[RMDB]
RNA sequence: GGGAACGACUCGAGUAGAGUCGAAAAUACCGCAGGCCUGCGGUGCGGCAGUGUGGAGACCUGCCGUAAGCCGUGUUGUUUUGACAUCCGGGAGAAAGCGUAUGCGGAGGCAGCGCUUUCAGGGUCUAAAAGUAUGGGAUCUUCGGAUCCCAUACAACUUUAUCCUAGACUUCGGUCUAGGAUAAAGAAAAGAAACAACAACAACAAC
Reactivity to 2A3 in 0.01 (KOAc 150mM, MgCl2 10mM, bicine 150mM(pH8.5), 24C), signal-to-noise 3, nucleotides 027 to 156: u120a010c000c000g020c020a040g030g120c010c100u040g000c010g020g000u000g000c000g010g000c000a010g010u040g000u100g300g090a050g030a080c000c000u010g010c010c000g000u000a030a030g040c030c040g060u090g020u080u020g010u020u080u030u100g050a050c040a060u020c030c000g000g020g020a100g010a010a000a000g000c010g000u030a290u200g020c050g000g070a050g300g000c000a000g000c010g000c020u000u000u000c020a010g020g000g000u010c010u030a040a060a040a030g000u000a000u000g010g000g000a010u000c010u010u040c160g070g000a000u000c010c000c000a000u000a000c000a000a000
Structure probing data (2A3) for a 207-nucleotide construct. Source: RMDB library M2RFPK, as collected in RNAgym. For 2A3, 3,225 sequencing reads were counted. For 2A3 the reverse transcriptase was SuperScript II with manganese.